[RMDB]
RNA sequence: GGGAACGACUCGAGUAGAGUCGAAAAACCGAAGCGAAAGCUGUCGUCCAGUACGUUUCCGGUGAUCAAGGACGUAAGCCGGAGGAGCAAAGGUGAUUAGAGACCCCUGUAGUUCCGGCCGUAAACUGAGCAUGACUGAGUUCGCUCAGUCAUGCUCAAAAGAAACAACAACAACAAC
Reactivity to 2A3 in 0.01 (KOAc 150mM, MgCl2 10mM, bicine 150mM(pH8.5), 24C), signal-to-noise 2, nucleotides 027 to 126: a000c000c000g020a030a010g050c100g100a210a100a040g000c000u020g070u130c010g030u030c040c000a010g030u050a000c050g000u000u040u060c090c040g030g000u090g060a090u140c100a080a170g090g000a020c000g110u170a030a030g000c000c020g000g010a030g000g030a100g030c050a050a050a000g050g010u130g000a080u020u130a040g090a000g010a130c030c000c000c000u010g020u060a040g010u040u000c000c000g000g000c020c000g020u060a110a000a000c020u100
Reactivity to DMS in 0.01 (KOAc 150mM, MgCl2 10mM, bicine 150mM(pH8.5), 24C), signal-to-noise 2, nucleotides 027 to 126: a070c010c000g030a130a030g000c010g010a150a110a120g000c000u000g010u020c030g030u030c040c020a030g030u030a120c110g030u000u010u000c020c000g000g000u010g020a120u000c260a110a160g030g000a000c040g000u000a060a290g000c010c000g000g000a230g000g090a120g020c020a010a080a010g000g000u010g000a120u030u000a130g000a280g020a150c070c000c000c050u020g000u010a300g030u000u000c000c030g000g000c000c030g020u020a140a140a090c130u030